[RMDB]
RNA sequence: GGGAACGACUCGAGUAGAGUCGAAAACGCCGCGCUUCUAAGUAAUCAUGCGCAAUAAUUUGUGGAGGGGUAAUAGGCUGGCCGAGCGCUGACGCUGCUUACUUUGCAGAACUCGCUCGUGCGGGCCGGAACGAGGGAAAUUCGUUUCCCUCGUUCCAAAAGAAACAACAACAACAAC
Reactivity to 2A3 in 0.01 (KOAc 150mM, MgCl2 10mM, bicine 150mM(pH8.5), 24C), signal-to-noise 3, nucleotides 027 to 126: c030g040c010c010g000c010g010c010u060u010c020u080a130a070g030u100a170a130u120c080a060u210g010c010g000c050a000a040u250a080a090u110u090u110g070u040g020g050a110g010g030g000g000u020a030a070u070a130g010g000c000u010g190g010c000c000g000a000g000c020g000c150u030g000a050c100g010c000u000g000c000u040u060a180c070u170u250u090g010c000a000g010a040a080c000u000c010g000c000u000c010g010u030g000c000g000g000g000c000c000
Reactivity to DMS in 0.01 (KOAc 150mM, MgCl2 10mM, bicine 150mM(pH8.5), 24C), signal-to-noise 2, nucleotides 027 to 126: c100g010c130c070g060c080g000c010u000u010c060u030a070a100g020u020a070a100u010c150a120u010g000c050g010c020a140a140u020a080a050u030u020u010g050u000g030g000a070g000g000g020g000u060a100a060u010a130g030g010c000u020g010g000c030c010g000a010g020c000g020c220u000g010a020c190g010c010u000g030c000u000u060a040c230u010u110u040g000c000a010g010a040a110c010u000c000g000c000u010c010g040u060g020c000g000g000g070c010c030
The data come from the RNA Mapping Database (RMDB), libraries RFM100 and RFMREP. This 177-nucleotide RNA was probed chemically with 2A3 and DMS. Reactivities are given for positions 27 through 126. DMS adducts were read by reverse transcription with MarathonRT.